[RMDB]
Description: This 207-nucleotide RNA was probed chemically with 2A3. 2A3 adducts were read by reverse transcription with SuperScript II with manganese. For 2A3, 616 sequencing reads were counted. Source: RMDB library RSTRND, as collected in RNAgym.
RNA sequence: GGGAACGACUCGAGUAGAGUCGAAAAUUAGAACAUACUAAAGCUACACGAAUUGAAUCGCCAUAGUUUGGUUCGUGUCACAGUUUAUGGCUCGGGGUUAACUGGUUCAACUUAAUCCUUAAAUUAUGAACUUAUCGUUUACUUGUUUGUCUUAUGACGUCUACAAGAGGUUCGCCUCUUGUAGACGAAAAGAAACAACAACAACAAC
Reactivity to 2A3 in 0.01 (KOAc 150mM, MgCl2 10mM, bicine 150mM(pH8.5), 24C), signal-to-noise 2, nucleotides 027 to 156: u070u040a010g060a130a050c060a200u300a070c080u180a140a040a010g060c090u100a010c000a000c000g000a020a000u010u030g000a010a000u030c080g000c010c000a010u010a020g010u000u010u010g010g020u010u000c010g000u010g040u100c060a010c010a160g130u220u080u000a000u000g010g000c000u010c010g020g000g020g030u000u000a020a000c000u100g170g000u050u050c050a010a000c030u010u000a000a000u020c000c000u000u020a040a030a040u300u130a210u280g000a010a000c000u100u060a130u250c120g060u030u020u070a080c030u050u050g050u030u100u140g080u040c010u040u060a110u090g040a020